Source: RMDB library OK1LIB, as collected in RNAgym. The record gives the reactivity of an RNA of 177 nucleotides to 2A3. Values cover nucleotides 27 to 126. The reactions ran in a buffer of 150 mM KOAc, 10 mM MgCl2 and 150 mM bicine (pH 8.5), at 24 C.
RNA sequence: GGGAACGACUCGAGUAGAGUCGAAAAUCUCCGGCAUUCGCGCAGACAAACCAUGGCGAGACGGUGAGUUUGAUGGCGCUUAUGUAAUAUCUUUAUUAAUUGGCGACCAUUGGGCUACUAAUGGUCCACCGACACCUGAGUUCGCUCAGGUGUCGGUAAAAGAAACAACAACAACAAC
Reactivity to 2A3 in 0.01 (KOAc 150mM, MgCl2 10mM, bicine 150mM(pH8.5), 24C), signal-to-noise 1, nucleotides 027 to 126: u050c100u000c000c000g020g000c060a040u040u000c000g000c000g030c000a000g070a110c000a060a110a000c000c000a010u120g090g000c140g020a060g020a230c010g050g000u130g070a210g050u070u060u000g080a040u160g120g010c000g010c030u000u010a020u060g050u010a030a030u010a130u090c100u080u210u210a060u170u070a250a090u010u020g030g000c000g020a040c000c000a000u000u000g000g000g000c010u190a000c000u010a240a040u140g030g000u000c000c010